The record gives the reactivity of an RNA of 177 nucleotides to DMS and 2A3. Reactivities are given for positions 27 through 126. Source: RMDB library OK2TST, as collected in RNAgym. For 2A3 the reverse transcriptase was SuperScript II with manganese. Conditions: 150 mM KOAc, 10 mM MgCl2 and 150 mM bicine (pH 8.5), 24 C.

RNA sequence: GGGAACGACUCGAGUAGAGUCGAAAAUGGCGGCGGUAUCAACGCUGUGCUGCCUGCUUAUUGGCUACCCAUUGGCUUGGGCGAUUGCUCACAGUAAACCAUCGACCCGCAACAUCUUAUUGCUGUAGCCACCUAAUUUAUUCGUAAAUUAGGUGGCAAAAGAAACAACAACAACAAC
Reactivity to DMS in 0.01 (KOAc 150mM, MgCl2 10mM, bicine 150mM(pH8.5), 24C), signal-to-noise 7, nucleotides 027 to 126: u000g010g010c010g000g020c020g020g030u000a060u010c120a100a150c220g020c110u000g010u000g020c020u000g010c010c040u010g020c050u010u010a070u000u010g010g000c110u010a130c040c010c020a110u000u010g010g000c070u000u000g010g010g010c050g000a090u000u000g010c040u000c070a070c120a060g010u000a060a100a140c060c020a030u000c060g000a110c030c020c010g010c080a050a050c120a050u010c110u000u010a090u010u000g010c030u000g000u000a210
Reactivity to 2A3 in 0.01 (KOAc 150mM, MgCl2 10mM, bicine 150mM(pH8.5), 24C), signal-to-noise 9, nucleotides 027 to 126: u080g010g000c020g000g000c020g010g010u060a050u260c070a070a110c120g020c150u030g020u030g010c000u020g010c000c000u010g010c020u110u160a120u160u180g050g010c020u070a100c010c000c030a050u030u140g050g010c050u040u060g020g000g000c030g160a160u040u180g010c010u020c030a040c010a030g070u100a040a090a040c030c010a020u020c020g070a220c040c000c010g010c030a030a060c010a090u080c030u130u160a150u100u180g070c020u030g050u080a030